[RMDB]
Source information:
The record gives the reactivity of an RNA of 177 nucleotides to DMS and 2A3. It was measured as part of the RMDB libraries RFM100 and RFMREP. Conditions: 150 mM KOAc, 10 mM MgCl2 and 150 mM bicine (pH 8.5), 24 C. DMS (dimethyl sulfate) methylates the pairing face of unpaired adenines and cytosines. For DMS the reverse transcriptase was MarathonRT.

RNA sequence: GGGAACGACUCGAGUAGAGUCGAAAAUGAGUAUUUAGGAUUUACAAUAAUUCAAAUGGAAGGAGUGAUUUCAAUGACUGCAGAUAUCAUUUCAACAAUUGGUGAUUUUGUAAAAUGGAUUUUAGAUACAGAAUAUGAUAUUCGUAUCAUAUUCUGUAAAAGAAACAACAACAACAAC
Reactivity to DMS in 0.01 (KOAc 150mM, MgCl2 10mM, bicine 150mM(pH8.5), 24C), signal-to-noise 7, nucleotides 027 to 126: u020g010a150g020u000a050u010u010u010a090g010g010a120u000u000u010a030c030a020a030u010a060a050u010u010c020a050a030a040u000g000g000a130a240g000g000a020g010u000g000a020u010u000u000c020a080a070u020g020a080c110u010g020c100a110g010a030u010a010u000c010a010u000u000u000c010a040a260c040a040a060u010u000g010g010u010g010a120u010u000u000u000g000u010a010a010a050a130u020g010g010a130u000u000u000u000a020g000a300u000
Reactivity to 2A3 in 0.01 (KOAc 150mM, MgCl2 10mM, bicine 150mM(pH8.5), 24C), signal-to-noise 9, nucleotides 027 to 126: u160g010a030g060u130a130u080u110u140a120g040g040a050u000u020u020a030c010a020a010u120a110a050u070u070c010a020a010a040u070g070g020a090a190g030g000a010g010u020g010a010u010u050u030c060a090a090u140g130a130c100u150g020c080a020g010a030u030a010u020c010a000u010u040u030c030a070a040c010a050a080u030u030g030g010u080g090a050u000u040u030u040g010u010a020a030a050a090u070g060g010a040u020u030u020u110a030g000a020u020